This 177-nucleotide RNA was probed chemically with 2A3 and DMS. Values cover nucleotides 27 to 126. The reactions ran in a buffer of 150 mM KOAc, 10 mM MgCl2 and 150 mM bicine (pH 8.5), at 24 C. Source: RMDB library 15KREP, as collected in RNAgym.

RNA sequence: GGGAACGACUCGAGUAGAGUCGAAAAGCCAGUUGGUGUUGUAGACACUGAGUGGGGUAACAUGUUAACGGGCAUUGCUGCACGUCCUCCACCAGGUGAACAGUUUAAGCACCUCGUGCCUCUUAUGCAUUGAGUCAUAGUUCGCUAUGACUCAAUGAAAAGAAACAACAACAACAAC
Reactivity to 2A3 in 0.01 (KOAc 150mM, MgCl2 10mM, bicine 150mM(pH8.5), 24C), signal-to-noise 3, nucleotides 027 to 126: g100c000c000a030g090u060u050g000g000u000g010u030u080g100u040a020g020a040c030a010c060u040g030a020g050u000g000g000g000g000u050a080a040c050a150u160g050u200u210a090a020c010g000g040g000c040a050u010u280g100c130u140g000c020a020c040g010u000c010c010u010c000c000a020c010c010a000g020g030u040g040a080a010c040a030g000u030u050u090a050a010g020c000a010c010c020u060c060g010u040g040c020c020u040c010u040u040a070u300g000
Reactivity to DMS in 0.01 (KOAc 150mM, MgCl2 10mM, bicine 150mM(pH8.5), 24C), signal-to-noise 5, nucleotides 027 to 126: g020c010c020a140g010u010u010g000g020u000g010u000u000g020u010a110g000a100c040a070c020u010g000a190g040u000g000g000g000g000u010a080a100c200a100u010g010u010u010a130a070c050g000g000g010c050a090u000u020g010c240u020g010c000a030c040g000u000c150c000u000c020c000a020c000c050a070g010g030u010g000a050a060c170a090g020u010u010u000a100a130g010c010a020c010c040u000c160g000u000g000c020c050u000c040u000u010a060u010g010